Structure probing data (2A3 and DMS) for a 177-nucleotide construct.
The 2A3 profile rests on 953 reads.
The reactions ran in a buffer of 150 mM KOAc, 10 mM MgCl2 and 150 mM bicine (pH 8.5), at 24 C.

RNA sequence: GGGAACGACUCGAGUAGAGUCGAAAAAUCACCUGGCAUGAAAGGGAUUACAGCGGGCUUAAGGUAAUUUCUACACGGCGGUUUUGCGCCUUACCUUCUGCGGUGCUGUUGCUGGCGAUUGGGUUAGCCUGCUAUUGUUCUUCGGAACAAUAGCAGGAAAAGAAACAACAACAACAAC
Reactivity to 2A3 in 0.01 (KOAc 150mM, MgCl2 10mM, bicine 150mM(pH8.5), 24C), signal-to-noise 1, nucleotides 027 to 126: a000u020c040a050c040c010u030g020g040c000a030u110g160a060a000a070g110g020g050a030u130u170a030c020a040g020c020g050g070g000c020u030u000a020a010g040g010u020a050a060u090u200u100c060u080a090c120a030c180g000g040c040g050g000u120u080u280u300g070c010g000c000c000u000u010a000c010c020u030u000c010u040g000c020g060g170u020g000c020u000g020u040u070g030c000u020g000g050c030g080a120u000u150g120g000g030u060u030a020g000
Reactivity to DMS in 0.01 (KOAc 150mM, MgCl2 10mM, bicine 150mM(pH8.5), 24C), signal-to-noise 2, nucleotides 027 to 126: a070u000c060a090c020c000u010g020g050c060a070u000g000a080a090a080g010g010g010a120u000u010a060c020a030g000c000g020g010g000c020u000u000a020a020g010g010u000a030a040u010u010u010c160u030a120c250a130c180g010g010c000g000g010u010u000u020u010g010c020g040c000c010u000u000a010c010c000u000u000c030u000g000c010g010g020u010g010c010u000g010u000u000g000c030u000g010g010c060g010a100u000u010g000g010g020u010u000a120g010